The record gives the reactivity of an RNA of 207 nucleotides to DMS and 2A3. For 2A3, 2,739 sequencing reads were counted. In probing experiments dimethyl sulfate is read out at A N1 and C N3, which are open when not base-paired. The RNA was probed in 150 mM KOAc, 10 mM MgCl2 and 150 mM bicine (pH 8.5) at 24 C. For 2A3 the reverse transcriptase was SuperScript II with manganese.
RNA sequence: GGGAACGACUCGAGUAGAGUCGAAAAAGACAGUUUCGACUGUCUACCUAGGGGUCCUCGGUGGGACAUGGCGGAUACCUGAAGCCUCCACGGGUAUUGCCAACAGCCGUAACAUCCGAGGACGGAGGCACCCAGAUAAAUAGGUUUCGACCUAUAAUCACCACCAAUAUUUCGAUAUUGGUGGUGAAAAAGAAACAACAACAACAAC
Reactivity to DMS in 0.01 (KOAc 150mM, MgCl2 10mM, bicine 150mM(pH8.5), 24C), signal-to-noise 1, nucleotides 027 to 156: a080g000a010c030a000g010u010u000u010c250g030a060c010u000g000u000c010u000a040c030c010u000a070g000g030g020g000u000c000c010u000c020g010g030u000g000g070g020a090c080a100u000g010g030c000g010g010a060u000a030c000c030u000g010a070a140g030c010c010u000c000c020a300c070g010g000g030u000a010u000u020g040c000c030a100a180c160a300g000c160c050g000u000a090a080c040a130u020c010c010g000a020g010g010a020c010g040g010a030g010g030c040a050c050c020c000a300g010a130u010a070a090a130u000a050g010g000u000u000u000c180g010a110c040c000u000a010u000a090a200
Reactivity to 2A3 in 0.01 (KOAc 150mM, MgCl2 10mM, bicine 150mM(pH8.5), 24C), signal-to-noise 4, nucleotides 027 to 156: a000g010a020c040a030g010u090u110u220c190g100a050c010u000g000u010c000u030a050c020c000u100a100g070g040g040g090u000c000c000u020c020g000g020u070g050g140g050a180c220a300u250g020g000c010g010g000a000u000a000c000c000u010g030a080a050g010c000c010u000c000c000a010c000g000g000g000u000a000u010u080g090c030c010a090a100c080a130g140c060c060g080u090a030a030c020a070u170c030c040g010a000g000g000a000c000g000g000a000g000g000c000a000c020c020c000a020g030a130u200a080a210a060u070a020g010g000u010u080u170c200g080a070c000c000u040a020u100a060a080

Reactivities are given for positions 27 through 156.